RNA sequence: GGGAACGACUCGAGUAGAGUCGAAAACGGGGCAUCCAAUCCGGUGCGGGAUGUGGCGUUGGCCGGUUUGGACACCCGCGGCAUCCGGGUACGGUCCAACCGUGGGGUCGCCGGCAUCGACGGCACCACUCAGUCACGUUUUCGAACGUGACUGAGUAAAAGAAACAACAACAACAAC
Reactivity to DMS in 0.01 (KOAc 150mM, MgCl2 10mM, bicine 150mM(pH8.5), 24C), signal-to-noise 3, nucleotides 027 to 126: c090g010g010g000g020c070a040u010c040c090a120a150u010c060c060g000g010u010g020c030g000g000g000a040u010g010u020g010g000c020g020u000u000g020g010c020c020g010g000u000u010u010g020g010a030c030a120c000c000c000g030c000g000g000c190a100u010c040c040g010g010g020u020a080c110g020g010u000c090c120a100a090c010c010g050u000g020g010g000g030u000c010g010c000c000g000g010c050a040u010c020g010a050c030g000g000c010a020c010c140
Reactivity to 2A3 in 0.01 (KOAc 150mM, MgCl2 10mM, bicine 150mM(pH8.5), 24C), signal-to-noise 2, nucleotides 027 to 126: c010g010g000g040g000c020a050u050c030c000a070a100u040c050c040g000g020u060g020c040g000g010g030a080u090g060u060g120g010c020g020u020u060g050g000c030c010g030g020u070u060u170g140g030a030c070a290c040c000c000g000c070g010g000c040a070u050c020c030g000g000g100u150a160c060g010g060u080c040c010a030a030c020c000g000u010g010g000g020g010u010c010g000c000c030g000g000c000a030u100c000g030a030c000g050g050c010a020c010c000
Conditions: 150 mM KOAc, 10 mM MgCl2 and 150 mM bicine (pH 8.5), 24 C.
This 177-nucleotide RNA was probed chemically with DMS and 2A3.
Values cover nucleotides 27 to 126.
For DMS the reverse transcriptase was MarathonRT.